[RMDB]
RNA sequence: GGGAACGACUCGAGUAGAGUCGAAAAGAUAUGGAGACGCUCCUUCGAUAAGCUAGUAUCGGAAACGAUACAUAGCUUUUGACGAAGUGCGUCUCCUAAGUCAAAGGCGUCGCUUCGGCGACGCCAACCUAAAUCGAUUCUUCGGAAUCGAUUUAGGAAAAGAAACAACAACAACAAC
Reactivity to 2A3 in 0.01 (KOAc 150mM, MgCl2 10mM, bicine 150mM(pH8.5), 24C), signal-to-noise 3, nucleotides 027 to 126: g020a010u040a010u080g000g000a000g000a010c010g030c020u180c150c080u090u000c040g220a280u090a300a000g000c000u000a010g000u000a000u010c020g010g000a010a010a000c010g000a000u010a000c000a020u020a010g000c000u020u020u040u160g300a210c050g000a000a010g000u010g010c000g010u000c000u000c000c000u000a000a000g010u000c020a060a070a160g010g000c010g030u000c020g030c070u090u240c300g140g000c030g000a010c000g000c000c000a000a010
Reactivity to DMS in 0.01 (KOAc 150mM, MgCl2 10mM, bicine 150mM(pH8.5), 24C), signal-to-noise 3, nucleotides 027 to 126: g020a040u000a220u010g000g000a010g000a000c010g010c000u020c300c070u000u000c000g000a160u020a020a030g010c000u000a010g000u010a000u000c010g020g010a060a050a040c010g000a020u000a000c000a080u000a000g000c000u000u000u010u010g000a230c160g020a020a020g020u010g000c000g010u010c000u010c000c000u000a000a070g010u010c020a090a150a130g000g020c000g050u000c010g010c000u000u000c230g020g010c000g010a000c010g010c000c000a010a020

Chemical mapping of a 177-nucleotide RNA with 2A3 and DMS. Source: RMDB library TTRDES, as collected in RNAgym. The RNA was probed in 150 mM KOAc, 10 mM MgCl2 and 150 mM bicine (pH 8.5) at 24 C. 2A3 adducts were read by reverse transcription with SuperScript II with manganese.